[RMDB]
Structure probing data (DMS) for a 177-nucleotide construct.
Conditions: 150 mM KOAc, 10 mM MgCl2 and 150 mM bicine (pH 8.5), 24 C.
RNA sequence: GGGAACGACUCGAGUAGAGUCGAAAAGAUAUGGACCCAAAUGCUCGAUAAGAUCCUCGGAAACGAGUGAUCUUUUGACGAGCUAUGGGUCCUAAGUCAAAGAAGUUCGAGUUCGCUCGAACUUCAACUAGUUAGGUGCGUUCGCGCACCUAACUAGAAAAGAAACAACAACAACAAC
Reactivity to DMS in 0.01 (KOAc 150mM, MgCl2 10mM, bicine 150mM(pH8.5), 24C), signal-to-noise 1, nucleotides 027 to 126: g030a020u010a300u020g010g000a020c020c000c000a000a170a130u010g000c000u010c010g010a150u010a000a040g000a010u000c000c000u000c000g000g000a150a090a150c000g000a000g000u010g010a000u000c000u000u000u000u000g050a140c200g010a010g020c010u000a300u000g030g000g030u000c000c000u000a030a030g010u000c010a080a120a070g000a020a010g030u000u000c000g020a030g000u000u020c210g000c000u000c030g030a010a000c000u000u000c030a050a170